[RMDB]
RNA sequence: GGGAACGACUCGAGUAGAGUCGAAAAAAAGCAAAUUUUCUCAGGAUACAUUUUUAUGCAUCUUAAAGCUGUUUAGCAAAAUGUACAGUCCAGGCCACUGCCAGAAGUGAAGCGCCAAAGUGCAUGCUCUGCUGAUAACUGCUUCUGCUUAUUUUCACCAGGUGAUAAAUUUCGAUUUAUCACCUGGAAAAGAAACAACAACAACAAC
Reactivity to 2A3 in 0.01 (KOAc 150mM, MgCl2 10mM, bicine 150mM(pH8.5), 24C), signal-to-noise 3, nucleotides 027 to 156: a000a000a000g170c180a210a180a080u110u070u050u020c040u020c040a020g080g010a020u050a060c010a040u040u090u110u210u300a070u150g030c020a040u040c050u120u190a180a140a020g000c020u010g020u040u080u090a050g000c020a030a070a090a040u030g010u010a030c000a070g070u000c090c040a040g010g000c000c000a020c010u060g060c070c070a060g020a180a040g100u030g060a060a040g130c060g000c060c010a040a040a010g010u040g060c030a000u030g020c020u030c030u070g020c000u000g030a050u050a180a070c050u040g030c000u020u020c020u040g040c020u100u040a070u090u130u020u000c030a050
Reactivity to DMS in 0.01 (KOAc 150mM, MgCl2 10mM, bicine 150mM(pH8.5), 24C), signal-to-noise 1, nucleotides 027 to 156: a060a050a030g020c020a040a100a170u010u000u000u000c050u000c000a180g040g000a030u000a010c000a000u010u000u010u020u020a010u010g020c000a010u010c020u000u010a060a100a110g030c000u000g050u000u000u000a100g010c020a070a050a050a080u010g040u000a040c000a080g020u000c020c030a150g020g000c030c090a050c030u020g050c000c070a160g010a070a140g030u000g010a060a110g030c100g000c020c010a010a080a110g000u000g000c070a040u000g010c040u000c010u010g020c010u000g020a040u000a040a060c070u000g020c010u000u000c040u000g000c020u000u000a190u000u000u000u000c050a300